This 177-nucleotide RNA was probed chemically with 2A3 and DMS.
2A3 adducts were read by reverse transcription with SuperScript II with manganese.
The reactions ran in a buffer of 150 mM KOAc, 10 mM MgCl2 and 150 mM bicine (pH 8.5), at 24 C.
It was measured as part of the RMDB library OK2TRN.
DMS adducts were read by reverse transcription with MarathonRT.
RNA sequence: GGGAACGACUCGAGUAGAGUCGAAAACGGCCGGCUAGCAUCGGCGCAUAUUACGUACGUAGCGCAUGCGCGCGCUAGCCGCGUAUAUAGCAUUAUAAUAUAUUAUACGAUGCCGUAUAGCCGCGGCCACAGGAACGAGAUUCGUCUCGUUCCUGUGAAAAGAAACAACAACAACAAC
Reactivity to 2A3 in 0.01 (KOAc 150mM, MgCl2 10mM, bicine 150mM(pH8.5), 24C), signal-to-noise 2, nucleotides 027 to 126: c020g010g010c010c060g000g000c020u000a000g020c000a060u120c190g210g000c000g060c010a000u040a020u060u210a040c080g060u020a060c110g030u040a040g000c050g000c090a010u020g000c010g010c010g040c020g000c010u000a010g000c000c010g000c010g010u010a000u000a010u000a000g010c010a040u050u300a130u280a300a090u220a030u060a060u240u060a040u020a020c010g050a050u030g000c010c030g010u030a060u100a090g000c020c010g040c010g060g000c040
Reactivity to DMS in 0.01 (KOAc 150mM, MgCl2 10mM, bicine 150mM(pH8.5), 24C), signal-to-noise 3, nucleotides 027 to 126: c110g000g010c020c010g010g010c010u000a010g000c040a070u010c110g010g010c020g000c010a010u000a100u010u020a040c020g000u010a130c300g000u000a100g020c300g000c110a050u000g010c060g030c030g050c220g000c000u000a010g000c020c000g000c060g010u010a010u000a010u000a050g000c030a110u010u010a090u000a080a110u000a180u010a140u000u000a050u000a040c030g000a050u000g010c000c070g020u000a060u010a090g010c020c030g020c040g010g010c020